[RMDB]
RNA sequence: GGGAACGACUCGAGUAGAGUCGAAAAAGAUUCGACACGGCCGCCACUCGUGACGGAUUUCCGAGUGUCGAACAUGAGGAUCACCCAUGUCCGAGGACCGGGUGUUGAGUAAAAAUAAAAAUAAAAAGAUCUUCAUACUGUUCGCAGUAUGAGGAUCAAAAGAAACAACAACAACAAC
Reactivity to 2A3 in 0.01 (KOAc 150mM, MgCl2 10mM, bicine 150mM(pH8.5), 24C), signal-to-noise 5, nucleotides 027 to 126: a000g110a110u030u000c000g000a000c010a000c000g060g000c000c000g000c010c010a060c030u050c050g130u160g020a020c020g030g030a070u090u030u010c010c010g020a070g010u020g040u100c110g030a070a040c010a010u070g050a050g020g020a030u060c020a090c020c010c010a050u200g000u000c010c000g020a040g040g020a020c010c020g010g010g000u010g000u010u030g010a010g040u070a000a020a040a000a010u190a040a060a020a010a000u230a050a050a010a010a010
Reactivity to DMS in 0.01 (KOAc 150mM, MgCl2 10mM, bicine 150mM(pH8.5), 24C), signal-to-noise 5, nucleotides 027 to 126: a090g000a100u010u000c000g010a010c010a020c010g030g010c030c000g020c170c020a080c020u010c130g010u020g010a020c120g000g000a170u010u020u020c030c030g000a150g020u000g010u010c060g000a030a110c040a050u010g000a220g000g000a060u010c110a060c030c000c050a090u030g020u000c000c000g020a120g020g000a140c300c150g000g000g000u000g010u000u000g000a080g010u020a000a050a080a080a100u050a020a080a070a050a060u030a040a060a100a120a090